[RMDB]
RNA sequence: GGGAACGACUCGAGUAGAGUCGAAAAUCUAACCGGAAUAUUUUGUAAAUUAGGAUCUACACUUGAUAAACGUCCAGUUUGCGCUAAAGUUUGGUUAAAACGUGUAUGGAUACGUUGAUCAUCACUACCCCUACCUAUUAUUCGUAAUAGGUAGGGGAAAAGAAACAACAACAACAAC
Reactivity to 2A3 in 0.01 (KOAc 150mM, MgCl2 10mM, bicine 150mM(pH8.5), 24C), signal-to-noise 5, nucleotides 027 to 126: u030c010u000a020a020c010c010g000g030a040a070u080a100u100u110u070u070g020u030a020a020a060u020u070a150g020g000a010u000c040u080a050c090a050c130u060u080g050a050u170a080a160a030c030g010u020c000c000a010g000u000u030u040g010c030g000c060u050a050a030a060g030u050u060u070g010g000u030u050a040a090a030a010c040g010u020g020u050a100u180g160g080a040u050a130c030g020u040u060g030a050u060c040a010u030c020a050c050u100a100
Reactivity to DMS in 0.01 (KOAc 150mM, MgCl2 10mM, bicine 150mM(pH8.5), 24C), signal-to-noise 7, nucleotides 027 to 126: u000c050u010a040a070c020c020g010g000a040a070u000a040u000u000u000u000g010u000a020a030a060u000u000a130g030g000a060u000c100u010a100c170a120c190u010u010g020a120u000a060a090a090c300g000u010c010c010a040g010u000u000u000g010c020g020c200u010a040a050a070g010u000u000u010g000g010u000u010a040a050a060a050c080g010u010g020u000a090u010g010g010a060u000a030c070g020u000u000g000a070u010c090a040u000c090a040c140u000a250
Source information:
Structure probing data (2A3 and DMS) for a 177-nucleotide construct. 2A3 adducts were read by reverse transcription with SuperScript II with manganese. Conditions: 150 mM KOAc, 10 mM MgCl2 and 150 mM bicine (pH 8.5), 24 C.